[RMDB]
RNA sequence: GGGAACGACUCGAGUAGAGUCGAAAAGUCUCUAUCUUCGGAUAGAGACAAAUAUAAGUACGACUUAGAGCUAGAUCAAUUAAUAUCGUCGACAACGUAAAAAAAGAGGUAUGUUCGCAUACCUCAACCUACACGAUAGGUUCGCCUAUCGUGUAGGAAAAGAAACAACAACAACAAC
Reactivity to 2A3 in 0.01 (KOAc 150mM, MgCl2 10mM, bicine 150mM(pH8.5), 24C), signal-to-noise 3, nucleotides 027 to 126: g000u000c010u000c000u000a000u000c010u040u040c200g130g000a010u020a000g010a000g000a010c000a000a000a000u020a000u000a010a050g030u040a050c020g030a010c060u030u110a030g010a020g140c050u100a050g020a230u100c050a020a050u120u130a100a100u080a040u200c050g040u010c010g030a020c040a110a040c050g170u230a070a150a000a080a010a020a000g010a000g000g000u010a000u010g030u020u090c210g000c090a000u000a000c000c000u000c000a000a000
Reactivity to DMS in 0.01 (KOAc 150mM, MgCl2 10mM, bicine 150mM(pH8.5), 24C), signal-to-noise 2, nucleotides 027 to 126: g010u000c000u000c000u000a000u000c000u000u010c210g000g030a000u000a000g000a040g000a000c000a000a020a070u000a140u000a070a110g010u020a070c070g020a070c130u000u000a110g030a090g000c050u010a070g000a150u010c050a110a120u010u000a070a140u000a140u000c020g010u000c010g000a080c080a070a030c060g010u030a000a010a000a030a070a090a140g010a030g000g000u000a000u000g000u000u030c260g030c010a010u000a010c010c000u000c000a010a020
The data come from the RNA Mapping Database (RMDB), library M2PK50. Structure probing data (2A3 and DMS) for a 177-nucleotide construct. The reactions ran in a buffer of 150 mM KOAc, 10 mM MgCl2 and 150 mM bicine (pH 8.5), at 24 C. Values cover nucleotides 27 to 126. Reactivities are rounded to 0.1 and cut off at 0 and 3.